[RMDB]
This 207-nucleotide RNA was probed chemically with DMS and 2A3. Reactivities are given for positions 27 through 156. The 2A3 profile rests on 4,037 reads. For DMS, 6,634 sequencing reads were counted. The data come from the RNA Mapping Database (RMDB), library M2RFPK. DMS (dimethyl sulfate) methylates the pairing face of unpaired adenines and cytosines.

RNA sequence: GGGAACGACUCGAGUAGAGUCGAAAACCGGAAUGGUUCCGCCGUGAUCGGGCCAUGCAAUAGUUGCCAACGACAACUAUGCUCCGGUUGCUCAGGCAGCGUAACGCUGCUUGAAGGACCACAUGAAUUAGCGCGACAUUGUUCGCAAUGUCGCGAAUCAUCUACUUGACUUCGGUCAAGUAGAUGAAAAAGAAACAACAACAACAAC
Reactivity to DMS in 0.01 (KOAc 150mM, MgCl2 10mM, bicine 150mM(pH8.5), 24C), signal-to-noise 3, nucleotides 027 to 156: c020c000g020g000a080a030u000g000g010u000u000c010c010g020c090c100g020u010g000a050u000c000g000g000g020c020c010a040u000g000c110a080a030u000a010g020u010u010g000c000c000a230a200c200g010a090c010a000a040c000u010a000u000g010c090u010c010c020g020g020u000u010g010c050u010c020a010g010g000c000a010g020c000g010u010a090a100c170g020c000u010g010c000u000u000g010a060a110g040g000a140c020c010a070c110a140u000g000a150a160u000u000a110g000c020g030c020g000a030c010a030u000u010g020u000u010c300g000c030a010a010u000g000u010c000g020c000g010a010a050
Reactivity to 2A3 in 0.01 (KOAc 150mM, MgCl2 10mM, bicine 150mM(pH8.5), 24C), signal-to-noise 5, nucleotides 027 to 156: c010c000g000g020a110a060u080g010g030u300u300c010c050g010c000c100g110u160g030a190u070c020g000g000g010c040c040a020u070g000c000a070a300u010a010g000u020u020g010c050c090a160a100c170g070a160c020a000a000c020u000a010u000g000c020u010c020c010g000g000u000u020g020c010u000c000a000g010g000c000a000g000c020g140u270a140a070c200g000c010u000g000c000u000u000g000a010a000g000g030a010c010c010a040c050a100u230g160a220a140u160u100a130g070c010g010c000g000a010c000a000u000u020g030u050u040c180g000c100a010a000u000g000u000c000g000c000g000a000a010